[RMDB]
An RNA of 207 nucleotides, treated with DMS and 2A3 and read out base by base. Values cover nucleotides 27 to 156.
RNA sequence: GGGAACGACUCGAGUAGAGUCGAAAAGUACGUAGAGUGUCGGCAAGCUCUAUAUAUGGACACUUACGAAGGGUUUUGGUUGUUUUGUAUCUCAAGCCGACUUAGAGUAUUUGAGGAAAAUACGACAUGAAUCCUGUGACGUUCGCGUCACAGGAAAUCGAAUUAUAAAGUUCGCUUUAUAAUUCGAAAAAGAAACAACAACAACAAC
Reactivity to DMS in 0.01 (KOAc 150mM, MgCl2 10mM, bicine 150mM(pH8.5), 24C), signal-to-noise 2, nucleotides 027 to 156: g040u000a000c030g030u000a010g010a030g030u000g020u010c010g030g030c040a170a300g020c020u000c040u020a000u010a070u000a040u010g010g030a140c040a040c070u010u000a170c070g000a110a140g010g020g040u010u010u000u010g030g020u000u000g000u000u000u000u020g000u010a080u010c050u020c060a050a090g030c010c020g000a090c060u000u030a110g010a300g000u000a040u000u010u000g000a170g020g010a120a010a040a070u000a040c010g020a130c080a070u000g010a090a130u000c000c000u010g000u000g020a030c000g030u000u000c300g030c020g020u000c000a000c000a000g000g000a000a000a030
Reactivity to 2A3 in 0.01 (KOAc 150mM, MgCl2 10mM, bicine 150mM(pH8.5), 24C), signal-to-noise 3, nucleotides 027 to 156: g060u050a030c070g000u010a010g000a020g030u000g060u060c020g020g030c080a110a130g000c020u010c020u090a030u020a010u000a010u150g080g030a020c020a000c160u150u160a040c140g070a070a040g040g030g000u010u080u100u180g070g000u000u010g010u000u030u020u020g050u030a130u090c030u010c060a020a010g000c010c000g030a050c040u040u040a040g000a000g070u040a060u040u040u100g050a080g000g150a010a000a010a070u070a040c020g050a020c040a050u170g120a100a040u030c000c000u000g000u000g000a010c010g010u020u060c170g010c020g090u000c000a000c000a010g000g000a000a000a010